[RMDB]
RNA sequence: GGGAACGACUCGAGUAGAGUCGAAAAGAUAUGGAACUCAAGAACGAUAAGCGUGAUCGGAAACGAUACGCUUUUGACGUUCGUAGGUUCCUAAGUCAAAACUACUCGGCGUUCGCGCCGAGUAGAAUCUUAGCUACCGGUUCGCCGGUAGCUAAGAAAAAGAAACAACAACAACAAC
Reactivity to DMS in 0.01 (KOAc 150mM, MgCl2 10mM, bicine 150mM(pH8.5), 24C), signal-to-noise 2, nucleotides 027 to 126: g010a040u010a300u020g010g010a010a010c020u010c030a300a220g010a000a000c000g030a070u000a000a000g030c000g010u000g000a020u010c000g000g000a070a080a190c000g010a000u000a010c000g020c000u000u000u000u000g000a130c070g020u000u000c000g010u000a220g000g020u000u020c000c000u000a020a050g000u000c010a030a130a120a090c010u000a000c000u000c020g000g000c010g040u010u010c280g010c020g030c000c000g020a020g000u000a010g000a080a060